Description
The record gives the reactivity of an RNA of 177 nucleotides to 2A3. Reactivities are given for positions 27 through 126.
RNA sequence: GGGAACGACUCGAGUAGAGUCGAAAACAACAAACCUGGACGAAACGCAAAGAAAUAAUGGCAAGCGAUAGGCGGACAAAGAAAAAGAAAGUCCGUCAAGCGUAACGUCCAGGAUAUCGCUUGCCAACGAUGCAUCGUGCUUCGGCACGAUGCAUCGAAAAGAAACAACAACAACAAC
Reactivity to 2A3 in 0.01 (KOAc 150mM, MgCl2 10mM, bicine 150mM(pH8.5), 24C), signal-to-noise 1, nucleotides 027 to 126: c010a000a000c050a000a130a020c000c000u000g000g000a000c030g120a000a060a000c000g000c050a210a030a060g140a030a080a040u260a020a090u110g000g000c000a000a000g070c000g000a000u000a070g000g020c000g000g000a000c000a000a220a020g250a140a080a000a000a000g170a020a130a040g000u000c000c030g000u000c000a000a020g000c000g000u010a040a040c010g000u030c010c000a000g000g000a000u020a000u000c000g000c000u000u000g000c000c000a000a000